Background: Chemical mapping of a 207-nucleotide RNA with DMS and 2A3. Source: RMDB library OK3TST, as collected in RNAgym. Conditions: 150 mM KOAc, 10 mM MgCl2 and 150 mM bicine (pH 8.5), 24 C. For DMS, 22,060 sequencing reads were counted. For 2A3, 15,312 sequencing reads were counted.
[RMDB]
RNA sequence: GGGAACGACUCGAGUAGAGUCGAAAACUUGUGUGGAGACAUAUAGGAGUUAUAGGAAUAUAGCAGAGGUACCGACGACAGUGAGCCGGAUGAAACGGGGUACCGAGAAUAUAUGGAAAGUGAGGGGUUACGACAUAUAUGCUCAGCUUACGUCGAGGCUAUAUAUGUAUUUCGAUAUAUGUAUAGCAAAAGAAACAACAACAACAAC
Reactivity to DMS in 0.01 (KOAc 150mM, MgCl2 10mM, bicine 150mM(pH8.5), 24C), signal-to-noise 6, nucleotides 027 to 156: c050u000u000g000u010g030u020g010g010a140g010a080c050a080u000a090u000a060g020g000a130g020u000u000a070u010a080g020g020a100a120u000a070u010a070g020c040a100g010a130g020g010u000a070c040c020g020a070c040g010a090c020a130g020u010g010a130g030c010c020g010g010a150u010g010a060a080a100c050g010g010g010g030u000a030c030c000g000a080g010a050a050u000a030u000a030u000g010g000a040a070a120g010u000g010a090g020g010g020g000u000u000a080c030g020a060c020a030u000a050u000a040u000g000c010u010c020a080g020c040u000u000a070c070g010u000c010g000a190g020
Reactivity to 2A3 in 0.01 (KOAc 150mM, MgCl2 10mM, bicine 150mM(pH8.5), 24C), signal-to-noise 9, nucleotides 027 to 156: c030u080u070g020u010g010u040g070g020a040g020a030c040a030u150a030u070a100g040g010a050g030u080u050a090u070a120g070g030a100a070u140a030u060a130g050c050a010g020a020g060g010u020a020c010c030g060a060c020g010a020c070a030g040u030g070a010g020c020c020g040g020a070u080g070a050a060a040c040g020g000g020g000u020a040c010c040g010a010g010a040a020u070a010u020a030u060g030g020a090a050a030g050u070g040a050g010g010g000g010u050u070a020c030g020a010c020a000u050a010u020a010u060g010c010u010c050a030g020c020u050u060a030c030g040u020c030g040a030g090